[RMDB]
Record summary: Source: RMDB library RNAMAK, as collected in RNAgym. An RNA of 207 nucleotides, treated with DMS and 2A3 and read out base by base. Conditions: 150 mM KOAc, 10 mM MgCl2 and 150 mM bicine (pH 8.5), 24 C.

RNA sequence: GGGAACGACUCGAGUAGAGUCGAAAACCGUUGAUUCGUCAACGGCAUUUUACCUUUGUGACGGACGUAUAUUGUGGUGGAGAGGCCCAUUGGGCUCCCCACCUCCAUUUCACAAUGCAAACGUCACUCUGGUUCAUAACCUUCGUUCGCGAAGGAACUUAUGAUGAUAAUUCGUUAUCAUCAUAAGAAAAGAAACAACAACAACAAC
Reactivity to DMS in 0.01 (KOAc 150mM, MgCl2 10mM, bicine 150mM(pH8.5), 24C), signal-to-noise 3, nucleotides 027 to 156: c000c000g000u000u000g020a050u000u000c300g040u000c010a010a000c000g020g030c010a010u000u000u000u000a080c010c000u000u000u010g020u020g000a040c030g000g020a230c170g040u010a110u000a080u000u010g020u000g020g060u000g000g010a040g030a290g020g000c020c000c030a230u000u030g050g020g010c030u000c170c010c020c040a270c130c010u000c020c020a050u000u000u000c020a040c020a060a010u000g010c090a070a090a180c010g020u000c010a000c020u000c020u000g000g020u010u000c130a110u000a110a130c010c010u000u000c010g020u010u000c290g010c030g030a020a010g040g000a040a080
Reactivity to 2A3 in 0.01 (KOAc 150mM, MgCl2 10mM, bicine 150mM(pH8.5), 24C), signal-to-noise 9, nucleotides 027 to 156: c000c000g000u000u000g010a050u030u070c230g050u010c150a000a000c000g010g000c000a030u130u180u090u140a030c000c000u010u010u010g010u010g000a000c010g010g020a030c070g060u070a110u020a030u210u050g000u010g000g000u010g000g000a010g000a020g010g010c020c040c110a240u200u300g030g000g000c010u070c040c030c000c000a030c010c000u000c000c000a020u080u230u290c010a000c000a020a020u030g020c030a210a160a040c000g000u000c000a000c000u000c000u000g000g020u030u110c080a100u120a250a210c000c000u000u010c010g040u040u080c220g000c020g120a000a000g010g010a010a000